[RMDB]
Record summary: An RNA of 207 nucleotides, treated with 2A3 and read out base by base. Reactivities are given for positions 27 through 156. The reactions ran in a buffer of 150 mM KOAc, 10 mM MgCl2 and 150 mM bicine (pH 8.5), at 24 C. The data come from the RNA Mapping Database (RMDB), library OK3TST. For 2A3 the reverse transcriptase was SuperScript II with manganese.

RNA sequence: GGGAACGACUCGAGUAGAGUCGAAAACGGAUGGAUGGCGUCAGUGUCCGGCGGGCGGCGAACACACUGGUGACCGAUGUGGACUGGUCGGUCGAGCUGGACGAGCGCUGGGUCGUGCUCGGCCCCAACGGUGCGGGCAAGACGACCGUGCUCAGGCCUAUCGAGUCGUAUUCGUACGACUCGAUAGAAAAGAAACAACAACAACAAC
Reactivity to 2A3 in 0.01 (KOAc 150mM, MgCl2 10mM, bicine 150mM(pH8.5), 24C), signal-to-noise 2, nucleotides 027 to 156: c010g050g000a020u080g050g070a030u070g030g040c040g000u020c050a040g010u010g030u110c030c010g020g010c020g040g030g010c010g000g010c020g060a090a000c040a000c020a000c070u060g080g000u110g060a040c060c020g020a020u080g060u090g050g030a070c090u060g000g030u060c000g000g040u020c060g010a010g000c010u040g000g080a040c040g010a010g030c000g000c060u200g050g000g030u030c020g000u030g000c000u000c030g030g010c020c010c020c000a110a170c140g010g130u240g140c050g020g000g000c010a040a030g100a030c000g000a000c020c000g000u030g000c010u000c010a030g060g000c000
Reactivities are rounded to 0.1 and cut off at 0 and 3.